[RMDB]
RNA sequence: GGGAACGACUCGAGUAGAGUCGAAAACAAAAUAAUUUUUCGCCGCUCAGGCAUGCGCGUGCGCUCUGUCAGCAUGCCGAGCAGCGGGCGGAACGCACGCUCGUUCCCAACUCUACUCGAGAAAAAAUCAAUACUAGUACUUCGGUACUAGUAUUGAAAAAGAAACAACAACAACAAC
Reactivity to DMS in 0.01 (KOAc 150mM, MgCl2 10mM, bicine 150mM(pH8.5), 24C), signal-to-noise 4, nucleotides 027 to 126: c190a070a080a090a110u010a060a100u010u000u000u000u000c010g030c110c040g010c060u010c090a110g010g010c000a010u000g010c040g000c110g030u010g010c060g010c130u000c060u020g010u000c020a170g010c000a020u000g000c010c070g010a080g010c080a020g020c000g000g010g000c060g000g010a020a010c040g010c060a050c100g000c110u000c020g010u000u000c000c000c020a150a050c010u000c000u000a010c000u000c010g010a030g020a000a020a060a070a060a060
Reactivity to 2A3 in 0.01 (KOAc 150mM, MgCl2 10mM, bicine 150mM(pH8.5), 24C), signal-to-noise 4, nucleotides 027 to 126: c020a010a140a060a120u300a070a110u120u050u030u040u080c040g000c040c010g030c050u080c100a040g030g000c010a000u060g020c090g010c020g050u140g060c040g020c080u100c080u210g100u050c020a010g000c030a080u030g010c000c020g030a020g000c000a000g000c010g000g020g000c020g030g010a030a030c020g020c010a060c090g040c060u030c020g000u010u000c000c000c000a010a010c010u000c000u000a010c020u060c010g000a000g000a050a030a000a000a000a000
Record summary
This 177-nucleotide RNA was probed chemically with DMS and 2A3. The 2A3 profile rests on 5,990 reads. The reactions ran in a buffer of 150 mM KOAc, 10 mM MgCl2 and 150 mM bicine (pH 8.5), at 24 C.